[RMDB]
RNA sequence: GGGAACGACUCGAGUAGAGUCGAAAAGCAAUGUAAAUAUUUUAAAGAAUUGUGUCAGACUGUUUAGUAGCAGUGAUUGUCUUAAUAUUGUGGGUGUUAAUUUUUGAUACUAAGCAUUGAAUGGCUAUCAUAUAGUGGAGUUCGCUCCACUAUAUGAAAAAGAAACAACAACAACAAC
Reactivity to 2A3 in 0.01 (KOAc 150mM, MgCl2 10mM, bicine 150mM(pH8.5), 24C), signal-to-noise 3, nucleotides 027 to 126: g010c000a020a060u060g030u190a060a090a070u160a300u070u240u110u170a110a130a050g070a100a070u150u080g110u010g020u080c020a010g010a170c030u020g020u030u050u050a070g020u010a020g070c000a000g040u010g040a030u050u070g020u040c010u020u100a110a070u070a130u190u150g070u150g070g050g010u050g040u040u110a060a060u050u020u070u140u060g000a000u000a020c000u020a050a000g030c000a010u040u060g030a070a050u050g030g000c020u050a030
Reactivity to DMS in 0.01 (KOAc 150mM, MgCl2 10mM, bicine 150mM(pH8.5), 24C), signal-to-noise 5, nucleotides 027 to 126: g000c030a040a040u000g000u010a100a080a080u000a050u010u010u000u010a050a090a170g010a110a070u000u010g010u000g020u000c030a050g010a150c060u000g010u000u010u010a070g010u000a060g010c020a020g010u000g000a060u000u010g000u010c030u000u000a060a080u000a080u000u000g010u000g010g000g020u000g010u000u000a030a040u010u000u000u010u010g000a040u000a040c030u000a030a080g000c000a020u000u000g010a090a090u000g010g010c040u010a130
This 177-nucleotide RNA was probed chemically with 2A3 and DMS. It was measured as part of the RMDB library OK2TST. For DMS, 6,884 sequencing reads were counted.